[RMDB]
RNA sequence: GGGAACGACUCGAGUAGAGUCGAAAAGCGGGUGUCCCUGGCUCUGGUAAGUCCAGGUCGAUUCAACAGGGGGAUGUAGAUGUGAUAGUUGUGCCAACCCGUGAGCUGCGUAACUCCUGGCGUCGCCCAUACCCUACACCUUCGGGUGUAGGGUAUGAAAAGAAACAACAACAACAAC
Reactivity to DMS in 0.01 (KOAc 150mM, MgCl2 10mM, bicine 150mM(pH8.5), 24C), signal-to-noise 5, nucleotides 027 to 126: g010c050g010g010g030u010g000u010c030c020c010u000g010g010c050u010c040u010g010g020u020a100a110g020u000c020c020a030g010g010u000c040g010a130u010u000c100a100a130c080a090g000g010g010g010g000a080u010g010u010a090g010a090u000g010u010g000a110u000a090g010u000u000g010u010g000c060c060a080a100c030c010c030g010u000g010a100g010c030u000g000c040g010u000a110a100c040u000c030c010u000g010g000c050g010u000c160g000c010c050
Reactivity to 2A3 in 0.01 (KOAc 150mM, MgCl2 10mM, bicine 150mM(pH8.5), 24C), signal-to-noise 3, nucleotides 027 to 126: g010c030g020g010g010u030g040u030c010c010c000u020g040g000c010u020c010u170g100g030u180a180a120g100u090c000c020a020g020g030u030c030g030a080u140u090c070a080a080c000a100g000g020g000g000g010a010u080g060u140a090g040a160u120g070u110g090a060u120a170g080u050u090g060u100g070c030c030a070a030c030c000c000g000u000g000a030g030c020u030g000c000g000u020a040a030c000u000c030c000u010g010g000c010g020u020c010g010c020c000